Chemical mapping of a 177-nucleotide RNA with DMS. Source: RMDB library OK2TST, as collected in RNAgym. For DMS the reverse transcriptase was MarathonRT. Conditions: 150 mM KOAc, 10 mM MgCl2 and 150 mM bicine (pH 8.5), 24 C.

RNA sequence: GGGAACGACUCGAGUAGAGUCGAAAACGAAGAAGUCGCGUCUCGUGCCGAUCGUGCUCGUCGGCAGCGCGUUCUGGAGCGGCCUGCUGCAGUGGUUCCGCGACCAGAUGAUUCCGAUGGGCCUCAACUGACGCGAGCAUUUCGAUGCUCGCGUCAGAAAAGAAACAACAACAACAAC
Reactivity to DMS in 0.01 (KOAc 150mM, MgCl2 10mM, bicine 150mM(pH8.5), 24C), signal-to-noise 1, nucleotides 027 to 126: c020g000a150a030g000a150a130g000u000c050g040c050g050u000c010u000c150g000u000g030c050c000g010a050u000c070g010u040g050c030u000c040g010u000c020g000g000c190a120g000c160g090c140g000u030u000c050u010g000g000a300g000c030g050g010c300c030u000g000c050u000g030c170a050g050u000g010g010u000u000c010c050g010c000g000a190c010c020a040g030a030u000g020a180u000u000c100c000g010a110u000g020g000g050c060c200u010c100a080a100